[RMDB]
RNA sequence: GGGAACGACUCGAGUAGAGUCGAAAACUCGUUCUAAUGCGGGGUAUGGGAACUUGGUGCGCAUUGAGCAUGCGUUUGGUUUCAGCUCCAUUUAUACGCAUUUAGAUCAUGUCAAUGUGCAGCCUAAUCUAAAAGAAGGGUUCGCCCUUCUUUUAGAAAAAGAAACAACAACAACAAC
Reactivity to 2A3 in 0.01 (KOAc 150mM, MgCl2 10mM, bicine 150mM(pH8.5), 24C), signal-to-noise 6, nucleotides 027 to 126: c000u010c010g020u070u040c060u160a130a050u160g030c030g010g030g000g000u090a100u160g100g020g030a030a050c030u060u110g060g000u050g020c000g000c010a000u000u030g050a050g060c030a010u040g000c030g040u020u050u090g060g020u050u110u130c060a050g020c040u010c000c000a000u020u120u060a180u040a030c020g000c010a010u060u070u140a120g040a110u110c030a050u170g050u060c020a030a010u030g020u020g020c010a040g060c000c000u070a100a090
Reactivity to DMS in 0.01 (KOAc 150mM, MgCl2 10mM, bicine 150mM(pH8.5), 24C), signal-to-noise 9, nucleotides 027 to 126: c020u000c030g020u000u000c050u000a070a060u000g010c040g010g000g010g010u000a060u000g020g010g000a060a060c110u000u000g020g030u000g010c010g020c010a010u000u000g010a080g020c230a040u000g010c040g020u000u000u000g010g000u000u010u010c280a140g010c220u010c010c020a080u000u000u010a100u010a100c030g010c010a030u000u010u010a090g010a100u010c140a080u000g000u000c030a030a030u000g010u000g010c010a060g020c020c020u000a060a160

Structure probing data (2A3 and DMS) for a 177-nucleotide construct. Conditions: 150 mM KOAc, 10 mM MgCl2 and 150 mM bicine (pH 8.5), 24 C.